[RMDB]
RNA sequence: GGGAACGACUCGAGUAGAGUCGAAAAAGGAUUUGGGUUUGAACCCAGGACCUCAGGAUUUAAAUCCAGGCCAUAUAGGCCUCCAGAGCCUAUAAUCUUAACCGUAAUCAUGAGAAAUAGUGACCAUUCUUAUUAAGAUUAUCUGAUUGAAAUAUACUCAGAAUAUAAGCUUCGGCUUAUAUUCUGAAAAAGAAACAACAACAACAAC
Reactivity to 2A3 in 0.01 (KOAc 150mM, MgCl2 10mM, bicine 150mM(pH8.5), 24C), signal-to-noise 1, nucleotides 027 to 156: a010g010g000a030u010u010u010g020g020g070u040u180u300g040a020a040c010c020c020a000g000g070a180c020c040u130c090a020g000g040a000u000u010u300a120a200a080u140c000c000a000g020g000c000c000a000u130a000u000a110g000g000c000c010u000c000c040a010g000a020g000c010c010u020a000u000a040a030u030c020u000u050a020a020c000c000g070u070a070a070u040c040a000u070g000a000g140a070a140a170u230a050g140u070g140a070c000c000a050u070u070c000u000u120a210u140u140a140a000g000a000u020u050a020u160c020u200g050a100u300u300g060a000a120a270u300a300u300a100c100
Source: RMDB library OK3TST, as collected in RNAgym. Structure probing data (2A3) for a 207-nucleotide construct. For 2A3, 239 sequencing reads were counted.